About this RNA:
This 207-nucleotide RNA was probed chemically with 2A3. Reactivities are rounded to 0.1 and cut off at 0 and 3. The RNA was probed in 150 mM KOAc, 10 mM MgCl2 and 150 mM bicine (pH 8.5) at 24 C. It was measured as part of the RMDB library OK3TST.
[RMDB]
RNA sequence: GGGAACGACUCGAGUAGAGUCGAAAAACGCAGAUCGCCACGGUUCUACGCAAUGUCACCAGCCAUGACUUCCACGGAUACAAGCGCGGGACAUUCACGCGGCGCAUCCAGCGACGCAUGCAGGUGCUGCAGAUCGGCAACAUCGAUAACUACAUCGCACUGACCCUACUUUCGAGUAGGGUCAGUGAAAAGAAACAACAACAACAAC
Reactivity to 2A3 in 0.01 (KOAc 150mM, MgCl2 10mM, bicine 150mM(pH8.5), 24C), signal-to-noise 2, nucleotides 027 to 156: a010c080g050c000a010g000a090u030c000g030c000c000a050c000g040g050u140u100c090u230a110c080g020c060a000a070u060g020u020c060a100c220c020a070g050c000c030a030u040g090a230c040u080u020c050c010a080c160g060g010a040u080a130c080a000a140g020c050g000c080g120g000g000a010c000a050u080u140c050a000c070g030c020g050g000c000g040c000a000u000c020c010a010g000c000g060a030c060g020c030a010u140g000c010a000g060g020u030g030c010u040g000c000a000g000a080u030c020g060g000c050a120a050c000a120u070c030g080a030u150a150a000c060u240a010c090a100u160c040g010